This 177-nucleotide RNA was probed chemically with DMS and 2A3.
For 2A3, 1,139 sequencing reads were counted.
DMS adducts were read by reverse transcription with MarathonRT.
2A3 adducts were read by reverse transcription with SuperScript II with manganese.
Conditions: 150 mM KOAc, 10 mM MgCl2 and 150 mM bicine (pH 8.5), 24 C.

RNA sequence: GGGAACGACUCGAGUAGAGUCGAAAAAAUUCGCAACGCCUCGUCCGUCUCGGGAAACGACCGGUGGGGCGCGUCGUAGUAGGUAUCGACCUGAACGACCCCGCCCCGUGGCGUCGCCUCGAGCGCCACCAGCCCUCGUAUUCGUACGAGGGCUGGUAAAAGAAACAACAACAACAAC
Reactivity to DMS in 0.01 (KOAc 150mM, MgCl2 10mM, bicine 150mM(pH8.5), 24C), signal-to-noise 1, nucleotides 027 to 126: a140a110u090u040c010g000c090a000a040c050g010c000c000u000c090g080u000c050c110g030u090c000u000c100g060g020g000a090a130a160c000g010a220c110c040g000g120u020g000g000g000g000c000g000c300g000u000c000g000u000a100g000u100a000g000g000u040a070u010c290g000a140c000c000u000g000a210a000c000g000a000c010c000c170c020g050c000c000c000c000g040u000g000g010c010g030u010c020g000c140c000u000c020g000a020g010c140g030c020c060
Reactivity to 2A3 in 0.01 (KOAc 150mM, MgCl2 10mM, bicine 150mM(pH8.5), 24C), signal-to-noise 1, nucleotides 027 to 126: a000a000u270u160c080g000c040a060a020c060g000c000c020u070c020g070u110c060c010g160u020c000u030c060g060g000g000a080a110a080c000g180a250c000c020g000g150u140g070g010g020g000c000g000c010g070u000c000g000u040a090g040u050a000g110g020u070a300u300c200g080a240c000c000u050g030a040a010c010g000a000c050c000c000c000g000c010c000c000c000g030u030g000g050c030g090u060c010g000c060c000u070c010g020a000g000c000g090c010c000